[RMDB]
RNA sequence: GGGAACGACUCGAGUAGAGUCGAAAAGCAGGACAUGAAUGAUGCCGUUAUCACGCUGAACGGCCUGGAAAAACGCUUUCCGGGCAUGGACAAGCCCGCCGUCGCGCCGCUCGAUUGUACCAUUCACCAUAGGAGUAUAGUUCGCUAUACUCCUAUGAAAAGAAACAACAACAACAAC
Reactivity to 2A3 in 0.01 (KOAc 150mM, MgCl2 10mM, bicine 150mM(pH8.5), 24C), signal-to-noise 8, nucleotides 027 to 126: g030c040a020g030g040a060c030a090u130g100a130a070u090g050a060u090g040c020c000g000u010u020a090u110c050a030c090g020c040u040g030a090a010c020g030g000c000c000u020g000g060a030a030a030a040a020c150g060c180u020u010u020c020c040g010g010g000c040a070u110g020g020a030c020a030a030g030c010c020c020g030c030c010g030u040c020g010c020g020c020c010g020c020u030c020g050a060u050u090g030u050a070c020c010a040u050u070c040a050c090
Reactivity to DMS in 0.01 (KOAc 150mM, MgCl2 10mM, bicine 150mM(pH8.5), 24C), signal-to-noise 9, nucleotides 027 to 126: g010c050a080g000g010a090c090a070u010g010a100a080u000g010a090u000g010c020c030g010u000u000a080u000c080a080c110g010c040u000g010a070a110c070g000g010c000c020u000g000g000a010a020a030a130a130c260g010c170u000u000u000c010c000g020g010g010c020a030u000g000g000a080c090a080a120g010c030c030c030g010c040c040g010u000c050g010c050g010c030c030g010c030u000c040g010a090u000u000g010u000a120c040c030a110u010u000c070a100c190